[RMDB]
RNA sequence: GGGAACGACUCGAGUAGAGUCGAAAAUAGUGUUUCGACACUAGAUUUUGAUAUGGACAGAACUACGCUUAUCAUGGCGUUGAAAUUUACUCGGAAACGAGUAAAUGGAGCCAUCUUAUGGCGCUGUCCUAAGUCGUAGUACGCGUUUCGACGCGAAGCUUAAAUCUUAGUUCGCUAAGAUUUAAGCAAAAGAAACAACAACAACAAC
Reactivity to DMS in 0.01 (KOAc 150mM, MgCl2 10mM, bicine 150mM(pH8.5), 24C), signal-to-noise 4, nucleotides 027 to 156: u010a030g020u000g010u000u000u000c220g020a150c010a010c010u000a020g000a210u000u000u000u010g010a090u000a140u010g000g010a040c000a140g000a120a210c030u010a080c000g030c010u000u000a030u000c020a040u000g010g000c000g020u000u000g000a080a100a030u000u000u000a000c000u000c000g010g010a160a100a280c010g000a040g010u000a000a000a010u000g000g010a300g020c000c000a010u000c020u000u000a050u000g020g010c000g010c010u010g000u000c000c000u010a040a080g000u000c020g010u000a100g020u000a090c020g010c030g020u000u000u000c230g010a040c020g020c010g010a060a150
Reactivity to 2A3 in 0.01 (KOAc 150mM, MgCl2 10mM, bicine 150mM(pH8.5), 24C), signal-to-noise 9, nucleotides 027 to 156: u090a020g020u020g020u050u100u080c190g080a010c010a010c030u030a070g030a300u080u160u160u300g030a040u030a050u140g000g000a000c000a000g020a140a050c120u160a070c220g010c030u080u080a060u230c070a030u060g010g000c020g130u130u020g000a000a000a000u000u000u000a000c000u000c000g030g000a030a050a020c000g000a000g000u000a000a000a000u000g000g010a000g000c000c010a020u010c040u090u170a200u200g030g000c020g000c010u000g000u000c000c000u000a020a010g000u000c020g020u030a050g080u060a070c020g020c000g000u050u090u170c230g090a040c010g010c010g030a060a010
An RNA of 207 nucleotides, treated with DMS and 2A3 and read out base by base. The RNA was probed in 150 mM KOAc, 10 mM MgCl2 and 150 mM bicine (pH 8.5) at 24 C.